[RMDB]
RNA sequence: GGGAACGACUCGAGUAGAGUCGAAAAUAAGAGGGGAACUCAAUAGAUGAUUUGAAACUACCUCGUGAAUGGAUAACUCAGAUCCUGUGUUGAGAAUUAUCCUUAGAAGGUCAAGGAGAAGGAGACCCAUUGGGAGGCUAUUGCAGUAAUUGAGUAAGAUAAAAUGACUCUUCGGAGUCAUUUUAUCAAAAGAAACAACAACAACAAC
Reactivity to DMS in 0.01 (KOAc 150mM, MgCl2 10mM, bicine 150mM(pH8.5), 24C), signal-to-noise 2, nucleotides 027 to 156: u020a070a140g000a050g000g010g020g000a100a180c060u000c010a070a130u000a120g000a130u030g000a160u010u000u000g000a130a140a090c040u000a100c020c000u000c050g060u000g010a040a090u010g030g010a070u000a030a050c050u000c010a100g000a100u010c040c070u020g030u000g020u000u000g010a100g010a090a060u000u010a070u000c000c030u040u010a110g000a100a110g010g010u000c040a060a080g030g000a040g010a090a100g000g000a120g000a090c100c050c050a140u000u000g010g010g010a040g040g020c060u000a070u000u000g000c020a080g030u020a080a130u010u000g010a100g020u010a100a240
Reactivity to 2A3 in 0.01 (KOAc 150mM, MgCl2 10mM, bicine 150mM(pH8.5), 24C), signal-to-noise 1, nucleotides 027 to 156: u250a060a010g010a030g010g000g000g000a040a030c000u000c000a010a030u050a080g230a110u070g020a040u090u090u130g060a030a030a020c020u120a150c000c040u030c070g010u120g060a100a110u150g000g020a030u030a040a000c000u000c040a030g000a160u050c000c030u050g010u040g040u080u040g000a020g020a060a070u040u020a040u080c020c000u040u000a070g030a250a010g030g000u020c040a010a000g010g000a080g020a020a020g020g000a010g010a000c010c090c010a060u020u000g040g040g010a030g000g000c040u030a040u070u210g000c000a010g060u080a220a030u090u100g000a000g060u050a140a030
Structure probing data (DMS and 2A3) for a 207-nucleotide construct. The reactions ran in a buffer of 150 mM KOAc, 10 mM MgCl2 and 150 mM bicine (pH 8.5), at 24 C. The 2A3 profile rests on 704 reads. For DMS, 2,227 sequencing reads were counted. The data come from the RNA Mapping Database (RMDB), library OK3TST. Values cover nucleotides 27 to 156.